[RMDB]
RNA sequence: GGGAACGACUCGAGUAGAGUCGAAAACGACCUGGUACGCCAGGUCGAUGGCUAUUAGUUGGUACUUAAGCACAAGCAUUCCACAAGGAUCAAUGGAAUGGAUUACUCCUUCCUUGUGCCUUGCCAACCAUCACUCCCGCUUCGGCGGGAGUGAUGGAAAAGAAACAACAACAACAAC
Reactivity to 2A3 in 0.01 (KOAc 150mM, MgCl2 10mM, bicine 150mM(pH8.5), 24C), signal-to-noise 2, nucleotides 027 to 126: c000g020a000c020c020u010g000g090u190a230c300g050c000c000a000g000g010u000c000g000a000u000g000g000c030u040a160u290u080a160g000u000u090g040g000u020a040c050u060u160a030a000g020c050a000c000a130a000g000c010a000u010u000c000c000a040c030a080a220g070g000a300u120c080a060a060u190g020g000a020a040u060g050g040a140u230u300a150c100u030c000c000u040u150c010c000u000u000g020u060g030c000c020u000u000g000c060c010a000a060
Structure probing data (2A3) for a 177-nucleotide construct. 2A3 adducts were read by reverse transcription with SuperScript II with manganese. Reactivities are rounded to 0.1 and cut off at 0 and 3. The data come from the RNA Mapping Database (RMDB), library OK1LIB. Conditions: 150 mM KOAc, 10 mM MgCl2 and 150 mM bicine (pH 8.5), 24 C.